[RMDB]
RNA sequence: GGGAACGACUCGAGUAGAGUCGAAAAACCCGCCUCCGGGCGCUCCCCUCGGACCUCCGUCGAGGGGGUUCACAUCCCCAACCCGCGGGCCGGCUACUCUUCUUUCCCUUCUCUCGUCUUCCUCGGUAACGGAUCAUGUUCGCAUGAUCCAAAAGAAACAACAACAACAAC
Reactivity to DMS in 0.01 (KOAc 150mM, MgCl2 10mM, bicine 150mM(pH8.5), 24C), signal-to-noise 8, nucleotides 027 to 129: a040c060c030c040g020c070c030u030c020c040g000g010g020c120g030c120u030c010c000c010c000u030c010g040g010a060c000c000u030c080c040g000u050c080g040a170g000g000g000g000g010u000u000c060a110c180a140u000c040c020c010c020a090a140c070c010c030g040c100g020g020g060c060c070g000g000c050u000a040c060u030c040u030u020c040u030u020u000c000c000c000u030u030c020u000c020u000c050g020u020c030u020u010c010c020u000c030g020g030u040a090a080c150
Reactivity to 2A3 in 0.01 (KOAc 150mM, MgCl2 10mM, bicine 150mM(pH8.5), 24C), signal-to-noise 9, nucleotides 027 to 129: a000c010c000c000g000c010c010u050c030c060g040g000g010c040g020c020u060c000c000c000c010u010c020g070g010a090c020c030u060c020c040g070u120c070g090a120g010g010g000g000g010u030u030c020a010c010a080u090c010c000c000c010a020a040c010c010c010g030c030g010g010g000c010c000g020g000c010u050a050c020u030c000u120u020c000u040u040u040c000c000c000u070u030c030u000c000u000c010g030u000c010u110u060c010c000u020c020g020g030u070a060a020c080
An RNA of 170 nucleotides, treated with DMS and 2A3 and read out base by base. DMS adducts were read by reverse transcription with MarathonRT. The RNA was probed in 150 mM KOAc, 10 mM MgCl2 and 150 mM bicine (pH 8.5) at 24 C. The DMS profile rests on 43,763 reads.